RNA sequence: GGGAACGACUCGAGUAGAGUCGAAAACAGCAUCGUGGCAAAUGAUCGCGAAGCAAGUAUUACUUUUGCCCCUGCGCUGCCCAUGGCCAAGAGUGAUUCGUGGAAACAUAUAAAGUACCCGGGCGAGCGAAAAUGAUGGGUUCGCCCAUCAUUUUCGAAAAGAAACAACAACAACAAC
Reactivity to DMS in 0.01 (KOAc 150mM, MgCl2 10mM, bicine 150mM(pH8.5), 24C), signal-to-noise 2, nucleotides 027 to 126: c110a100g030c010a040u000c110g020u000g020g010c030a100a090a070u010g010a060u000c030g020c030g020a110a060g020c120a050a150g020u000a100u000u000a070c100u000u010u000u000g010c100c010c010c060u000g000c090g010c060u010g010c010c000c020a090u000g010g000c080c060a030a040g010a050g000u010g010a100u000u010c070g010u000g000g000a140a070a100c090a080u000a120u000a060a070a110g010u000a070c020c020c030g030g000g020c050g030a090g020
Reactivity to 2A3 in 0.01 (KOAc 150mM, MgCl2 10mM, bicine 150mM(pH8.5), 24C), signal-to-noise 1, nucleotides 027 to 126: c050a030g000c000a060u060c040g040u040g040g000c000a090a040a230u150g050a120u080c070g000c020g050a020a000g010c020a050a000g150u050a120u100u060a120c040u050u020u040u070g010c000c000c000c000u050g000c060g020c050u030g030c030c000c010a070u080g050g000c050c050a030a050g040a010g060u070g040a100u070u090c050g000u050g080g000a000a130a000c030a020u130a010u080a150a050a140g010u040a020c000c010c040g030g030g000c020g000a100g020